[RMDB]
RNA sequence: GGGAACGACUCGAGUAGAGUCGAAAAGCACAAUGGGCGAAAGCCUGAUGCAGCGACGCCGCGUGAGGGAUGACGGCCUUCGGGUUGUAAACCUCUUUCAGCAGGGAAGAAGCGAAAGUGACGGUACCUUUAAAUGGGUAUUCGUACCCAUUUAAAGAAAAGAAACAACAACAACAAC
Reactivity to DMS in 0.01 (KOAc 150mM, MgCl2 10mM, bicine 150mM(pH8.5), 24C), signal-to-noise 9, nucleotides 027 to 126: g010c040a080c080a080a090u010g010g010g010c010g000a110a100a160g010c020c010u000g010a070u000g010c030a090g010c030g010a110c130g010c030c040g010c080g020u010g000a030g000g010g010a040u010g010a150c300g000g000c010c020u000u010c140g020g010g020u000u000g020u010a020a260a280c020c010u000c020u000u000u000c080a090g020c030a070g000g000g000a060a060g010a110a110g010c070g000a040a050a090g010u000g000a070c060g010g010u000a090c150
Reactivity to 2A3 in 0.01 (KOAc 150mM, MgCl2 10mM, bicine 150mM(pH8.5), 24C), signal-to-noise 7, nucleotides 027 to 126: g010c000a010c020a050a150u180g020g010g000c010g070a100a020a010g010c010c010u030g020a040u060g010c030a020g030c000g060a050c060g030c030c010g030c030g030u050g030a020g020g040g010a040u300g010a030c000g010g010c000c000u030u070c120g090g000g000u000u040g010u020a020a010a010c000c000u030c000u010u060u050c020a020g000c010a030g040g020g050a090a110g030a060a000g020c030g040a090a040a010g060u070g050a020c020g020g050u110a110c010